The data come from the RNA Mapping Database (RMDB), library VIROID. Chemical mapping of a 207-nucleotide RNA with 2A3 and DMS. Values cover nucleotides 27 to 156.
RNA sequence: GGGAACGACUCGAGUAGAGUCGAAAAUUACGGACAAAUUCCGUAACCGUGUGAGGCCAACAUCAAAGAUGCGUACCUAGCUGCGUUUCAACCUGCGUGGGUUGAGGCGGCUUAGCGGAUUAGGGCGUUCUGCCCCAGUGGUACCAUUACCCUAUGCGACGAGAUAGAAGUUCGCUUCUAUCUCGUCAAAAGAAACAACAACAACAAC
Reactivity to 2A3 in 0.01 (KOAc 150mM, MgCl2 10mM, bicine 150mM(pH8.5), 24C), signal-to-noise 5, nucleotides 027 to 156: u050u000a010c010g010g020a030c120a130a160a140u270u020c010c000g000u000a010a030c040c040g070u050g030u050g150a110g060g020c050c000a030a030c020a120u140c100a060a110a070g050a040u060g020c070g030u060a110c000c010u020a020g000c010u020g020c020g010u040u000u030c000a000a000c000c000u190g130c170g230u300g010g000g010u010u010g010a000g000g000c020g000g000c020u020u020a010g000c010g010g060a060u110u160a050g020g000g010c060g120u260u080c100u200g000c000c000c020c000a070g090u040g060g010u030a020c010c010a000u020u050a110c000c000c030u120a110u160g060c060
Reactivity to DMS in 0.01 (KOAc 150mM, MgCl2 10mM, bicine 150mM(pH8.5), 24C), signal-to-noise 2, nucleotides 027 to 156: u020u000a000c000g030g050a040c050a220a100a130u000u000c000c000g040u000a020a060c090c070g010u020g000u000g020a060g040g020c040c060a100a060c020a060u010c040a130a140a180g000a090u000g010c010g030u000a060c020c010u000a140g030c020u000g080c010g020u000u000u000c000a010a030c040c000u000g050c300g030u010g000g000g000u000u000g000a070g110g050c000g050g020c070u000u000a060g000c050g020g010a190u010u000a030g000g010g020c000g020u000u020c080u010g010c000c020c000c040a070g030u010g020g000u000a050c020c030a090u000u000a170c010c000c020u000a080u000g010c230